[RMDB]
RNA sequence: GGGAACGACUCGAGUAGAGUCGAAAAGAAGCGGCGAAAAAUGCGUGUAAAUAAAAGGUCAAUAUGACCUGACAGUGAUAGCAAAUUAAAUGGGUCGAAGUCUCGCCAAAAUACGCAACAAAUAGAACUUGUAAAUUAGUUUCGACUAAUUUACAAGAAAAGAAACAACAACAACAAC
Reactivity to DMS in 0.01 (KOAc 150mM, MgCl2 10mM, bicine 150mM(pH8.5), 24C), signal-to-noise 5, nucleotides 027 to 126: g010a090a100g010c100g020g010c020g000a010a060a080a120a080u000g000c030g010u010g010u010a040a060a080u010a070a060a110a020g010g000u000c010a130a160u020a130u000g010a020c000c010u000g010a070c110a090g010u020g010a050u010a080g000c050a040a050a100u010u000a030a080a080u000g000g000g010u000c020g000a060a120g010u010c030u000c040g000c040c050a040a020a060a060u010a030c050g000c020a070a060c110a050a070a090u010a090g010a080a120
Reactivity to 2A3 in 0.01 (KOAc 150mM, MgCl2 10mM, bicine 150mM(pH8.5), 24C), signal-to-noise 4, nucleotides 027 to 126: g070a040a010g030c040g060g000c030g060a100a060a050a020a010u080g010c040g010u050g030u070a050a110a100u130a060a130a020a010g010g000u000c010a060a160u190a170u300g010a000c000c000u000g000a000c030a020g030u030g080a030u070a060g080c030a050a060a030u150u110a040a100a070u160g060g000g010u030c000g020a060a010g040u000c010u020c010g050c000c000a040a090a010a020u090a010c030g020c020a030a010c030a050a150a040u160a060g080a060a060
This 177-nucleotide RNA was probed chemically with DMS and 2A3. Reactivities are given for positions 27 through 126. The RNA was probed in 150 mM KOAc, 10 mM MgCl2 and 150 mM bicine (pH 8.5) at 24 C.